[RMDB]
This 170-nucleotide RNA was probed chemically with 2A3 and DMS. For DMS the reverse transcriptase was MarathonRT. For DMS, 4,590 sequencing reads were counted. Conditions: 150 mM KOAc, 10 mM MgCl2 and 150 mM bicine (pH 8.5), 24 C.

RNA sequence: GGGAACGACUCGAGUAGAGUCGAAAAUCCUUCCUCUCCCUGUCGGUGAAGUCUCCCGCACGGGUCCUCUUCCUAGGUCCGGAGUCGAUCUCCAUCUGAUCCGUCCGGGCCCUCUUCGUCGGGGGAGUACGGCCUUCCUUCGGGAAGGCCAAAAGAAACAACAACAACAAC
Reactivity to 2A3 in 0.01 (KOAc 150mM, MgCl2 10mM, bicine 150mM(pH8.5), 24C), signal-to-noise 2, nucleotides 027 to 129: u010c010c000u030u090c050c020u000c020u010c000c020c000u020g070u080c050g070g020u000g000a040a000g030u000c050u010c080c000c000g040c010a020c030g000g010g000u020c010c020u120c010u140u140c000c020u070a050g010g080u000c060c080g060g010a000g060u140c090g100a080u020c000u000c030c060a150u000c080u140g000a030u000c010c010g020u010c000c010g010g000g000c000c000c000u020c000u000u000c020g030u000c000g010g000g000g000g000a000g000u010a000c000
Reactivity to DMS in 0.01 (KOAc 150mM, MgCl2 10mM, bicine 150mM(pH8.5), 24C), signal-to-noise 3, nucleotides 027 to 129: u030c060c050u010u090c080c030u040c070u000c040c060c040u040g110u080c020g010g010u020g020a000a070g020u030c090u000c050c050c050g110c180a080c090g040g000g050u040c060c040u030c110u030u050c010c010u040a080g050g040u030c070c100g010g040a010g050u100c220g030a090u070c010u010c140c120a200u070c150u080g030a040u020c020c120g020u020c110c010g000g000g000c090c020c020u000c030u000u000c030g030u020c030g000g010g060g000g010a040g060u020a100c180